[RMDB]
Chemical mapping of a 177-nucleotide RNA with DMS and 2A3. For 2A3 the reverse transcriptase was SuperScript II with manganese. Reactivities are rounded to 0.1 and cut off at 0 and 3. Conditions: 150 mM KOAc, 10 mM MgCl2 and 150 mM bicine (pH 8.5), 24 C.
RNA sequence: GGGAACGACUCGAGUAGAGUCGAAAAGAUAUGGAUGUACCAUAGCUAUAGGAGCGAAGAACUCGGAAACGAGGGAGCUCUCAUAGCUUAAGUACAUCCUAAGUCAAAACAGGGCUUCGGCCCUGAACCCAAACUAUAGGUUCGCCUAUAGUUUGGGAAAAGAAACAACAACAACAAC
Reactivity to DMS in 0.01 (KOAc 150mM, MgCl2 10mM, bicine 150mM(pH8.5), 24C), signal-to-noise 3, nucleotides 027 to 126: g000a060u000a300u010g000g010a010u000g010u000a010c000c030a140u000a010g020c010u000a020u000a070g000g010a020g020c000g010a100a120g020a150a210c010u000c010g000g010a080a070a190c000g000a010g000g020g010a090g020c010u010c000u000c030a000u000a000g020c000u020u000a080a080g000u000a010c000a010u000c000c000u000a010a060g010u000c010a080a050a140a240c010a000g000g010g010c000u000u020c170g020g000c000c000c000u010g000a050a060
Reactivity to 2A3 in 0.01 (KOAc 150mM, MgCl2 10mM, bicine 150mM(pH8.5), 24C), signal-to-noise 4, nucleotides 027 to 126: g010a000u060a040u150g010g000a000u010g010u000a020c000c010a060u100a040g010c010u000a010u030a100g010g050a000g010c020g180a300a030g010a100a070c000u010c010g020g040a090a070a050c020g000a010g000g000g020a020g010c000u000c000u010c010a010u010a000g000c000u010u010a090a010g000u000a000c010a000u000c000c000u000a020a010g020u010c030a010a010a130a210c010a010g000g000g010c020u120u240c300g200g000c020c010c010u000g000a010a010